[RMDB]
RNA sequence: GGGAACGACUCGAGUAGAGUCGAAAACUGACAACGACGCUGGACGGAAGAGUUGUCGCACAGCAGACGGUUGGAUAUGCAAGACCGAUGAUAAAAAAGAUGGAUGAUUUCGAGAAACUAUUAGGAGGUGAGAGAGUUGGGCUUGCUUAAAGCAACCCGAAGAAUCUAAGUUCGCUUAGAUUCUUCGAAAAGAAACAACAACAACAAC
Reactivity to DMS in 0.01 (KOAc 150mM, MgCl2 10mM, bicine 150mM(pH8.5), 24C), signal-to-noise 4, nucleotides 027 to 156: c040u010g020a100c040a090a080c030g020a050c040g010c040u000g010g020a140c110g000g010a170a100g020a060g020u000u010g030u010c020g020c060a180c030a090g000c050a130g010a120c060g010g010u000u020g000g020a150u000a090u010g030c030a110a130g010a080c020c010g020a090u010g030a180u020a000a060a080a070a080a090g000a080u010g010g020a080u000g010a100u000u000u000c020g020a120g000a110a040a060c040u000a120u000u000a080g030g010a060g000g010u000g000a050g000a120g000a140g020u000u000g000g000g010c040u000u000g000c000u000u000a080a060a130g010c030a040a100c050c030
Reactivity to 2A3 in 0.01 (KOAc 150mM, MgCl2 10mM, bicine 150mM(pH8.5), 24C), signal-to-noise 6, nucleotides 027 to 156: c030u040g030a020c030a060a020c040g100a010c020g020c110u090g030g060a030c030g010g030a050a010g030a060g040u040u060g010u040c010g010c020a100c020a040g090c020a020g050a070c030g010g020u030u040g030g030a090u080a050u220g040c040a060a020g000a030c020c070g020a050u050g040a020u200a050a090a010a010a010a020g070a070u090g030g040a020u040g030a050u050u120u120c100g010a060g060a080a070a040c030u060a090u190u050a050g030g030a020g010g010u080g010a020g010a010g000a000g010u060u040g010g000g000c040u010u020g000c000u050u200a080a070a020g010c010a010a010c000c000
This 207-nucleotide RNA was probed chemically with DMS and 2A3. The 2A3 profile rests on 4,989 reads. It was measured as part of the RMDB library OK3TST.